[RMDB]
RNA sequence: GGGAACGACUCGAGUAGAGUCGAAAAUGGGCAUCGUCGCCGCGGACCUCGGCCAUUUUCUUGGCCAACGAGUUGGCCACAGCCUUGGCGAUCAACGUCUUACCACAGCCGGGUGGGCCAUAGAGCAGGUUAGCUUCUAGUUCGCUAGAAGCUAACCAAAAGAAACAACAACAACAAC
Reactivity to DMS in 0.01 (KOAc 150mM, MgCl2 10mM, bicine 150mM(pH8.5), 24C), signal-to-noise 2, nucleotides 027 to 126: u000g010g020g020c010a110u010c130g030u020c100g010c030c050g020c160g000g010a130c040c050u000c120g000g040c020c010a070u010u000u000u000c150u000u000g000g010c040c040a030a040c200g000a110g010u010u000g010g000c020c010a040c130a170g010c080c040u000u000g080g010c010g000a080u000c110a030a110c170g000u000c030u000u000a150c110c060a100c140a120g000c020c060g010g000g000u000g000g000g030c000c030a060u010a040g000a100g010c170a060
Reactivity to 2A3 in 0.01 (KOAc 150mM, MgCl2 10mM, bicine 150mM(pH8.5), 24C), signal-to-noise 2, nucleotides 027 to 126: u050g000g010g020c030a060u040c080g100u060c080g000c030c010g030c020g030g050a090c000c030u020c040g000g000c000c010a060u140u130u050u010c090u010u050g000g020c020c000a010a030c070g070a030g130u050u030g040g000c000c000a060c030a030g060c010c010u050u290g000g000c020g020a050u110c020a010a110c070g090u030c030u070u150a080c020c070a030c070a030g020c060c040g040g020g020u030g000g040g000c010c000a020u040a020g110a000g040c080a020
An RNA of 177 nucleotides, treated with DMS and 2A3 and read out base by base. The data come from the RNA Mapping Database (RMDB), library OK2TST. The RNA was probed in 150 mM KOAc, 10 mM MgCl2 and 150 mM bicine (pH 8.5) at 24 C. For 2A3 the reverse transcriptase was SuperScript II with manganese. The DMS profile rests on 1,366 reads. In probing experiments dimethyl sulfate is read out at A N1 and C N3, which are open when not base-paired.